Structure probing data (DMS) for a 177-nucleotide construct.
RNA sequence: GGGAACGACUCGAGUAGAGUCGAAAAUAGGCGAUGUAUCAGGUUAUGUAAAGAAUGCAGGAUUAACUGCUUUCUUCCUGACCCUGAGGUUUGGAUUAGGGACUAAGUAUCCUGCUCUGGCUAUGAGCGGCUGUCGCUAAUUCGUUAGCGACAGCCGAAAAGAAACAACAACAACAAC
Reactivity to DMS in 0.01 (KOAc 150mM, MgCl2 10mM, bicine 150mM(pH8.5), 24C), signal-to-noise 1, nucleotides 027 to 126: u010a050g000g000c010g000a040u000g020u030a160u010c010a040g000g020u000u000a080u010g050u000a120a040a020g010a020a000u000g000c000a010g000g010a230u000u010a130a200c020u000g000c000u000u000u000c000u000u000c060c020u020g020a150c300c000c030u010g000a090g050g000u000u000u000g000g000a030u000u000a020g030g020g000a020c090u000a050a030g020u010a100u010c040c020u000g000c040u000c000u000g010g010c080u000a050u000g010a060g020
The reactions ran in a buffer of 150 mM KOAc, 10 mM MgCl2 and 150 mM bicine (pH 8.5), at 24 C. The data come from the RNA Mapping Database (RMDB), library OK2TRN.